[RMDB]
Conditions: 150 mM KOAc, 10 mM MgCl2 and 150 mM bicine (pH 8.5), 24 C. The record gives the reactivity of an RNA of 207 nucleotides to 2A3. The 2A3 profile rests on 701 reads. Values cover nucleotides 27 to 156. It was measured as part of the RMDB library M2RFPK.
RNA sequence: GGGAACGACUCGAGUAGAGUCGAAAAAAUGCCGCCUCAGUUCCAAGCUCUUUCGUGGCACUGUAAACAGUCCUAUUGAGUUAGGGGCAGUCAACCACGUUUCGAAGCUAAAUUAUCUGGUCGAGAGUUACGAUUCCCUACUUCGGUAGGGAAUCAAGGUCCUCCUAAAGUUCGCUUUAGGAGGACCAAAAGAAACAACAACAACAAC
Reactivity to 2A3 in 0.01 (KOAc 150mM, MgCl2 10mM, bicine 150mM(pH8.5), 24C), signal-to-noise 1, nucleotides 027 to 156: a010a000u080g020c050c020g030c000c020u050c000a070g020u130u060c020c020a120a000g000c000u000c010u050u060u120c060g010u000g000g040c160a020c020u000g050u160a080a200a090c060a080g180u000c000c000u010a020u050u090g060a100g270u060u030a010g000g000g000g000c000a000g010u010c010a020a020c000c000a050c010g000u000u060u000c090g030a060a020g020c000u020a020a110a120u280u150a080u050c110u050g000g070u080c040g050a030g000a000g180u100u050a060c060g010a010u000u020c000c000c000u000a000c000u020u020c070g040g000u000a000g030g000g010a000a000u010c000a000a000